[RMDB]
RNA sequence: GGGAACGACUCGAGUAGAGUCGAAAAGGAGUAUUAUUUGAAUGGUGUGAAAGGUUAGAUUCUUUGUAAUUGCACCAACGUAUAAAUACAUCAUCUUUUGCCUUUCUUUCAAUCAGAUUGAGUGUGCCACGUCUUAAAGCUUCGGCUUUAAGACGUGAAAAGAAACAACAACAACAAC
Reactivity to DMS in 0.01 (KOAc 150mM, MgCl2 10mM, bicine 150mM(pH8.5), 24C), signal-to-noise 2, nucleotides 027 to 126: g010g000a070g010u000a050u000u000a030u000u000u010g000a150a140u000g000g030u010g020u000g000a060a030a040g010g010u000u010a100g010a100u010u000c030u000u010u000g000u000a070a180u010u010g000c030a020c010c030a020a180c110g000u000a030u000a030a030a060u010a010c030a080u000c070a070u000c010u010u000u000u010g020c020c050u000u000u000c020u000u000u000c070a070a080u000c150a050g000a290u000u000g020a090g020u000g000u000g030c090
Reactivity to 2A3 in 0.01 (KOAc 150mM, MgCl2 10mM, bicine 150mM(pH8.5), 24C), signal-to-noise 2, nucleotides 027 to 126: g100g000a040g020u060a010u100u010a050u080u090u050g240a270a060u060g030g000u000g020u060g100a040a010a040g080g010u050u070a060g010a300u250u010c000u080u080u110g060u090a190a180u130u090g030c020a010c010c000a030a000c010g070u100a020u020a160a110a010u100a030c010a090u010c010a020u070c040u060u080u030u010g000c030c000u020u090u040c010u010u110u040c050a090a200u030c040a020g020a180u060u080g030a060g070u120g040u040g040c040